Chemical mapping of a 177-nucleotide RNA with 2A3 and DMS. Values cover nucleotides 27 to 126. The RNA was probed in 150 mM KOAc, 10 mM MgCl2 and 150 mM bicine (pH 8.5) at 24 C. In probing experiments dimethyl sulfate is read out at A N1 and C N3, which are open when not base-paired.
[RMDB]
RNA sequence: GGGAACGACUCGAGUAGAGUCGAAAAGAUAUGGAUCAUCUUACUUCGAUAAGAGUACUAUCGGAAACGAUAGACUCUUUUGACGAAGGGGAUGAUCCUAAGUCAAAGCUGGGGUUCGCCCCAGCAAGAUGAACAGUACCUUCGGGUACUGUUCAUCAAAAGAAACAACAACAACAAC
Reactivity to 2A3 in 0.01 (KOAc 150mM, MgCl2 10mM, bicine 150mM(pH8.5), 24C), signal-to-noise 2, nucleotides 027 to 126: g040a000u080a030u140g020g010a000u010c000a010u000c020u100u110a300c030u130u020c020g090a080u040a140a000g050a010g020u110a300c020u010a020u000c010g060g010a120a050a040c010g000a010u010a010g000a000c010u000c000u020u000u010u040g190a120c060g020a000a010g000g020g000g000a000u000g000a010u010c010c000u000a010a000g030u000c020a120a130a000g000c000u000g000g040g000g010u070u150c300g160c010c000c040c020a020g020c000a010a000
Reactivity to DMS in 0.01 (KOAc 150mM, MgCl2 10mM, bicine 150mM(pH8.5), 24C), signal-to-noise 2, nucleotides 027 to 126: g020a040u000a300u000g000g000a000u000c000a000u010c000u000u000a140c000u000u000c000g010a150u000a010a020g000a020g020u000a170c000u000a010u010c000g000g000a110a100a210c000g010a000u010a000g020a110c000u000c000u000u030u000u010g000a170c150g030a010a010g010g000g020g000a000u000g000a010u000c000c000u020a010a100g000u000c030a150a220a140g010c000u000g000g030g010g000u000u000c300g000c020c000c000c000a000g010c030a030a030